[RMDB]
RNA sequence: GGGAACGACUCGAGUAGAGUCGAAAACGCUGAGGAAGAAAACCGGAUACACCUUCGCCAAUUGCAAGAAGGCGCUGGAGAAGCACAACAACGACGUCGGAUUGGCUGAAAAGUGGCUGCACGAGCAUAUCGUACUCAUAUUCGUAUGAGUACGAUAAAAAGAAACAACAACAACAAC
Reactivity to DMS in 0.01 (KOAc 150mM, MgCl2 10mM, bicine 150mM(pH8.5), 24C), signal-to-noise 8, nucleotides 027 to 126: c090g030c070u010g010a100g010g010a080a080g000a090a050a090a110c090c040g010g010a110u010a110c150a100c040c030u010u000c040g020c050c070a080a110u010u010g010c090a090a110g010a080a100g010g010c070g000c060u010g010g010a110g010a070a050g000c070a050c100a050a070c090a050a090c090g000a060c090g010u010c030g000g000a100u000u010g010g000c040u000g000a040a040a070a090g010u000g000g020c030u000g010c060a070c080g000a060g010c130a120
Reactivity to 2A3 in 0.01 (KOAc 150mM, MgCl2 10mM, bicine 150mM(pH8.5), 24C), signal-to-noise 4, nucleotides 027 to 126: c030g010c030u070g030a020g070g030a090a090g050a060a160a010a020c030c000g010g000a040u070a070c050a040c010c010u020u030c010g000c030c020a110a170u120u170g050c040a080a090g060a060a040g090g000c010g000c030u020g030g000a050g020a050a010g040c050a020c010a070a130c010a010a030c050g090a010c040g040u050c010g000g040a090u040u060g040g000c050u040g050a100a020a000a010g060u050g020g020c020u050g000c040a020c070g050a030g030c010a030
The record gives the reactivity of an RNA of 177 nucleotides to DMS and 2A3.
2A3 is a SHAPE reagent: it acylates the 2'-hydroxyl of flexible nucleotides of all four kinds.
For 2A3, 7,922 sequencing reads were counted.
It was measured as part of the RMDB library OK2TST.
2A3 adducts were read by reverse transcription with SuperScript II with manganese.